This 207-nucleotide RNA was probed chemically with 2A3.
RNA sequence: GGGAACGACUCGAGUAGAGUCGAAAACUGCAGGUCAACGGGUCAUCUUCAGAUCAGCUAUUGCAGAAGAAAGGUCAGCCAAGCGCUCUGGGCCUGACCGACUGUAUAUAGGAGCUUCUGAUUUCAACCAGAAGCUAACUCUCUCCGAAACAAUGAGGUCCGAGUACGUAUUCGUACGUACUCGGACAAAAGAAACAACAACAACAAC
Reactivity to 2A3 in 0.01 (KOAc 150mM, MgCl2 10mM, bicine 150mM(pH8.5), 24C), signal-to-noise 1, nucleotides 027 to 156: c050u090g000c040a020g040g010u100c050a020a070c060g040g000g000u020c000a050u000c060u250u070c050a080g010a210u030c070a020g070c000u080a010u020u080g000c020a010g010a180a000g120a060a190a000g000g000u020c000a000g000c000c010a100a020g050c040g030c150u060c110u190g030g030g000c010c000u000g000a000c000c000g010a010c020u000g010u030a040u010a010u050a200g100g000a010g050c000u000u000c000u000g070a100u160u040u220c000a010a010c000c000a010g000a000a000g020c010u010a030a040c000u040c000u000c000u020c030c060g040a120a070a060c070a010a160u180g010a070g050
Conditions: 150 mM KOAc, 10 mM MgCl2 and 150 mM bicine (pH 8.5), 24 C.